[RMDB]
RNA sequence: GGGAACGACUCGAGUAGAGUCGAAAAUCCUCUAUCUUCGGAUAGAGGAAAAGAGGUAGCAGGUACCGCUAGCAAAGAAAAGGUACCAAGACGGAAACGUCAAAACGAAGGGGUUCGCCCCUUCGAACCAUGUAAGAGUGUUCGCACUCUUACAUGGAAAAGAAACAACAACAACAAC
Reactivity to DMS in 0.01 (KOAc 150mM, MgCl2 10mM, bicine 150mM(pH8.5), 24C), signal-to-noise 5, nucleotides 027 to 126: u000c000c000u000c000u000a000u000c000u000u010c220g020g000a020u000a000g010a010g000g010a010a000a060a100g010a130g020g010u010a010g020c000a110g000g000u000a000c000c010g020c010u000a030g000c160a160a130a140g000a030a010a030a150g010g000u010a020c000c010a110a090g000a010c000g000g000a110a070a140c000g020u000c020a060a060a050a190c030g010a010a010g010g000g020g000u000u010c210g000c010c010c000c000u000u000c010g000a040a100
Reactivity to 2A3 in 0.01 (KOAc 150mM, MgCl2 10mM, bicine 150mM(pH8.5), 24C), signal-to-noise 6, nucleotides 027 to 126: u010c000c000u010c000u000a000u000c000u020u030c140g100g000a010u010a010g000a030g010g020a020a040a000a020g090a020g030g080u030a000g000c200a120g010g000u000a010c000c010g000c020u030a020g080c090a130a060a040g080a030a090a030a010g000g000u000a000c000c000a000a040g010a000c010g010g010a040a040a020c010g000u000c010a000a010a020a070c010g000a000a000g030g010g010g010u040u090c190g120c000c000c000c000u000u000c000g000a000a000